[RMDB]
RNA sequence: GGGAACGACUCGAGUAGAGUCGAAAACUAUAAGUAGCAACAUCUUUGUAUUGACACCAAGAUGUGCUCUAGGCGCCGAAGGGGCAAGAAGAGUAAAACAACUCCUCCAAUCUCUCAGGCAAAAGGACAAUACAUGUAGGUUCGCCUACAUGUAUUGAAAAGAAACAACAACAACAAC
Reactivity to DMS in 0.01 (KOAc 150mM, MgCl2 10mM, bicine 150mM(pH8.5), 24C), signal-to-noise 6, nucleotides 027 to 126: c030u000a130u010a100a060g020u000a020g020c010a060a060c010a000u000c000u000u000u010g010u000a230u010u000g010a150c190a060c070c090a020a000g010a010u000g020u000g000c010u000c030u000a070g000g020c250g010c010c010g010a150a130g000g000g000g010c120a150a100g010a010a020g000a020g010u000a040a070a100a130c300a070a040c010u000c000c020u000c010c010a060a130u010c000u000c010u000c060a300g000g010c010a060a050a080a090g010g020a230
Reactivity to 2A3 in 0.01 (KOAc 150mM, MgCl2 10mM, bicine 150mM(pH8.5), 24C), signal-to-noise 7, nucleotides 027 to 126: c030u030a030u070a300a090g210u220a000g030c030a030a160c000a030u000c010u030u030u030g040u060a190u100u300g140a070c060a010c200c010a000a000g000a010u000g010u000g010c000u000c000u010a070g100g000c060g010c060c000g020a040a030g000g020g000g000c020a020a010g010a010a000g020a010g020u090a030a200a080a060c060a040a030c020u000c010c000u000c020c000a040a050u020c010u010c000u030c040a010g000g000c000a030a020a020a020g030g020a020